[RMDB]
RNA sequence: GGGAACGACUCGAGUAGAGUCGAAAAGUGCCGGCAAUACAGUGUGUAUGGAGGUCUCAAUGGCUCGGAAAUGCCAGCAAACCGGCGUAGAUAUUAGCAGACGUAUGGGCGUAAGACUUUUAUUGAAAAAAGUACAUAAGCUUCGGCUUAUGUACAAUCCUGAAUUAAACUUCGGUUUAAUUCAGGAAAAAGAAACAACAACAACAAC
Reactivity to 2A3 in 0.01 (KOAc 150mM, MgCl2 10mM, bicine 150mM(pH8.5), 24C), signal-to-noise 1, nucleotides 027 to 156: g040u050g060c000c000g000g000c090a080a050u060a030c100a090g080u060g010u000g010u300a100u020g030g000a040g020g000u020c020u000c090a030a050u010g020g010c020u010c150g020g030a160a070a000u090g000c000c000a060g000c090a040a050a100c000c000g000g000c020g050u000a060g000a060u080a030u220u090a000g020c050a000g070a090c010g090u090a110u160g030g070g080c030g030u040a080a010g050a000c010u120u010u000u100a110u140u170g030a040a030a030a030a030a030g000u000a000c000a000u000a000a000g000c050u010u010c040g150g000c000u020u000a000u000g000u000a000c000a000a000
Reactivity to DMS in 0.01 (KOAc 150mM, MgCl2 10mM, bicine 150mM(pH8.5), 24C), signal-to-noise 2, nucleotides 027 to 156: g020u000g030c000c000g030g000c000a050a090u020a040c040a100g000u000g010u010g040u000a050u000g020g010a120g030g030u000c020u000c060a060a080u000g020g030c000u000c030g020g010a100a100a140u000g000c020c020a120g060c040a050a120a040c010c020g040g020c010g020u000a110g010a070u000a030u010u000a030g030c030a130g020a070c080g000u010a120u010g010g010g010c020g040u010a080a140g010a060c030u010u000u000u010a090u030u000g000a000a050a040a130a150a140g010u010a020c000a000u000a000a020g010c000u000u000c300g050g020c010u000u000a000u000g020u010a010c000a020a060
Notes: An RNA of 207 nucleotides, treated with 2A3 and DMS and read out base by base.